[RMDB]
RNA sequence: GGGAACGACUCGAGUAGAGUCGAAAAAACAUAGUGGCCUUAUUCCCUAGAAAUCAUCCGAUGUACCGAAGUGGAACUGUUCUUGAUGUGUUGUCUCGAACGGAUCAGCGUGGGUCGGGCCAGGUGAGCUCUGUCAUAUUUUCGAAUAUGACAGAGCAAAAGAAACAACAACAACAAC
Reactivity to DMS in 0.01 (KOAc 150mM, MgCl2 10mM, bicine 150mM(pH8.5), 24C), signal-to-noise 3, nucleotides 027 to 126: a040a040c050a030u010a080g020u000g010g010c010c010u010u000a160u000u000c000c010c000u010a120g010a090a060a070u000c050a040u000c020c030g020a090u000g000u000a040c020c010g010a100a180g010u000g010g010a030a070c030u000g000u000u000c010u000u000g010a030u000g010u010g000u010u020g010u000c000u000c070g000a020a010c020g010g010a060u010c020a160g000c030g020u010g010g000g000u000c050g000g000g020c010c020a190g000g010u000g000a120
Reactivity to 2A3 in 0.01 (KOAc 150mM, MgCl2 10mM, bicine 150mM(pH8.5), 24C), signal-to-noise 3, nucleotides 027 to 126: a000a000c130a060u160a050g130u100g030g010c000c020u070u060a050u050u020c000c000c000u030a060g100a060a050a020u070c020a010u020c010c040g120a030u040g020u080a020c020c020g060a110a010g030u040g070g040a040a030c010u010g010u040u010c000u000u020g020a030u020g220u080g110u300u300g020u020c010u000c010g010a020a010c010g000g030a050u050c010a010g030c000g080u140g050g010g020u000c010g000g000g000c010c000a010g040g000u020g030a020